[RMDB]
RNA sequence: GGGAACGACUCGAGUAGAGUCGAAAAGAUAUGGAUCCUUGUAGGGAGGCUCGUGUCGGAAACGACACCGGCCGAGGAUCUACGGGAUCCUAAGUCAAAUCGGGACCAUCUUCGGAUGGUCCCGAAACAUUUUAACACGGUUCGCCGUGUUAAAAUGAAAAGAAACAACAACAACAAC
Reactivity to 2A3 in 0.01 (KOAc 150mM, MgCl2 10mM, bicine 150mM(pH8.5), 24C), signal-to-noise 2, nucleotides 027 to 126: g030a010u030a020u070g000g000a000u020c020c050u160u300g030u040a020g020g100g120a170g020g000c000u020c030g000u000g000u020c000g000g000a040a030a000c010g000a000c010a000c000c050g000g040c000c010g010a020g020g030a090u000c000u000a000c030g020g000g010a010u020c000c000u000a050a000g030u010c030a000a030a240u060c000g020g000g000a010c080c070a010u000c010u080u160c300g110g000a010u000g020g000u000c000c000c000g000a000a000a000
Reactivity to DMS in 0.01 (KOAc 150mM, MgCl2 10mM, bicine 150mM(pH8.5), 24C), signal-to-noise 3, nucleotides 027 to 126: g000a030u000a170u020g000g000a010u000c000c000u000u020g040u000a030g000g000g000a130g020g020c010u000c300g010u010g010u010c000g010g010a070a030a090c000g000a020c010a000c000c120g030g000c030c010g000a080g000g010a100u000c000u000a010c000g010g000g000a000u000c000c000u010a010a050g000u010c020a070a120a170u010c000g000g000g000a020c000c000a020u000c000u000u020c300g030g000a000u000g000g000u000c000c000c000g010a000a010a040